[RMDB]
RNA sequence: GGGAACGACUCGAGUAGAGUCGAAAAGGAGGAACCUUCGGGUUCCUCCCAUUACCGAGAACCUUGCACGGUAUAAACAAGGAACCCUUGGAAACAAGGGAAAUAUUCACGUCUUCGGACGUGAAAAGAAAACUUUUAGGUUCGCCUAAAAGUUUUCAAAAGAAACAACAACAACAAC
Reactivity to 2A3 in 0.01 (KOAc 150mM, MgCl2 10mM, bicine 150mM(pH8.5), 24C), signal-to-noise 1, nucleotides 027 to 126: g000g020a030g000g000a000a000c030c030u080u090c300g030g020g030u000u000c000c000u000c000c000c000a000u000u110a030c000c000g030a070g010a050a060c010c000u000u030g010c090a010c120g020g060u180a170u170a170a110a020c040a050a000g020g020a080a060c000c000c010u000u020g020g010a010a040a000c000a000a000g050g000g000a000a000a000u030a000u000u010c000a000c000g010u000c010u020u030c170g110g000a000c000g000u000g010a010a020a010a020
Reactivity to DMS in 0.01 (KOAc 150mM, MgCl2 10mM, bicine 150mM(pH8.5), 24C), signal-to-noise 1, nucleotides 027 to 126: g010g020a040g000g000a010a000c000c000u000u010c150g020g000g010u000u020c000c000u000c000c000c000a030u010u000a170c040c000g010a220g000a150a150c020c000u000u010g010c030a120c100g030g020u040a060u000a130a160a050c060a000a040g000g000a210a180c000c000c000u000u000g000g000a120a080a220c000a000a000g000g010g010a010a020a120u010a080u000u000c010a000c000g010u000c000u000u000c150g060g000a040c000g040u000g000a000a000a060a150